RNA sequence: GGGAACGACUCGAGUAGAGUCGAAAAGUUCGAUCUUUUCCAACUUCCUCUUAUAUCCUAUUCAUGGAAAAGAUCGAUUAGCGUGAGACUGAGGAAGUGGUAUUUAUGUGAGGUCUCAUGCCUCACACUACUGCUUUGUAUUCGUACAAGGCAGUAGAAAAGAAACAACAACAACAAC
Reactivity to DMS in 0.01 (KOAc 150mM, MgCl2 10mM, bicine 150mM(pH8.5), 24C), signal-to-noise 9, nucleotides 027 to 126: g010u000u000c010g010a010u000c000u000u000u000u000c000c000a130a070c040u000u000c010c010u000c030u000u000a130u010a000u000c020c030u000a090u010u010c190a170u000g000g000a010a000a010a010g000a010u000c000g010a070u000u000a000g020c150g010u000g010a110g010a070c070u000g010a030g010g010a030a020g020u000g010g010u010a060u010u010u010a080u010g010u000g010a030g010g010u000c150u000c170a080u010g000c000c010u000c000a010c030a130
Reactivity to 2A3 in 0.01 (KOAc 150mM, MgCl2 10mM, bicine 150mM(pH8.5), 24C), signal-to-noise 9, nucleotides 027 to 126: g030u030u040c010g000a010u000c000u000u010u000u000c000c000a030a030c010u020u010c000c000u010c010u050u100a080u010a000u030c000c020u030a060u070u160c090a100u140g000g000a000a000a000a000g000a000u000c000g000a020u040u100a000g040c020g020u090g070a080g010a040c040u020g000a000g000g010a010a010g000u020g040g040u200a170u080u150u030a070u060g010u000g000a000g000g010u010c020u010c130a020u170g010c000c000u000c000a010c000a000
Structure probing data (DMS and 2A3) for a 177-nucleotide construct. For DMS the reverse transcriptase was MarathonRT. The reactions ran in a buffer of 150 mM KOAc, 10 mM MgCl2 and 150 mM bicine (pH 8.5), at 24 C. Values cover nucleotides 27 to 126.